[RMDB]
RNA sequence: GGGAACGACUCGAGUAGAGUCGAAAACUAAUUUAUCCACUCCGAUUGCGGCAAAGUUGGUGACGAAAAGUACGUUAACUGGGAAGAACUUUCAUCUACAUGACAUUUGACGUUAUUACUUACGACGUUGGCCAAGAUGACAGAGUAGAGAAUGUCAUCGUAGCUAGUAGUUCGCUACUAGCUACGAAAAAGAAACAACAACAACAAC
Reactivity to DMS in 0.01 (KOAc 150mM, MgCl2 10mM, bicine 150mM(pH8.5), 24C), signal-to-noise 2, nucleotides 027 to 156: c050u010a100a150u020u010u020a080u030c030c020a090c030u000c000c030g050a150u050u000g020c070g030g120c040a050a090a080g040u000u000g000g030u000g010a130c060g000a060a100a030a080g030u010a090c060g040u010u000a070a160c070u000g000g020g030a160a090g000a030a070c050u000u000u000c020a080u030c040u000a070c070a170u010g040a060c050a220u020u000u000g020a080c020g030u020u000a090u010u020a180c100u000u000a060c010g000a030c030g000u000u020g030g000c030c020a050a100g010a020u000g040a050c060a070g010a080g030u020a120g010a050g010a070a100u000g010u000c000a110
Reactivity to 2A3 in 0.01 (KOAc 150mM, MgCl2 10mM, bicine 150mM(pH8.5), 24C), signal-to-noise 2, nucleotides 027 to 156: c000u010a000a070u130u090u080a100u090c090c010a030c020u040c020c020g140a070u010u110g070c000g000g000c050a060a020a150g000u000u000g050g020u000g040a020c020g030a140a070a020a000g090u090a020c030g040u120u100a280a010c070u020g010g020g050a040a040g020a090a040c030u070u090u070c040a070u000c070u040a060c030a070u110g080a000c010a020u020u050u080g000a010c000g030u020u040a060u130u130a090c050u060u020a010c060g000a000c000g050u010u000g060g000c010c030a000a040g010a000u050g000a000c030a040g050a010g070u070a000g030a000g020a100a090u060g050u050c000a000
An RNA of 207 nucleotides, treated with DMS and 2A3 and read out base by base.
2A3 adducts were read by reverse transcription with SuperScript II with manganese.
Values cover nucleotides 27 to 156.
For DMS, 2,211 sequencing reads were counted.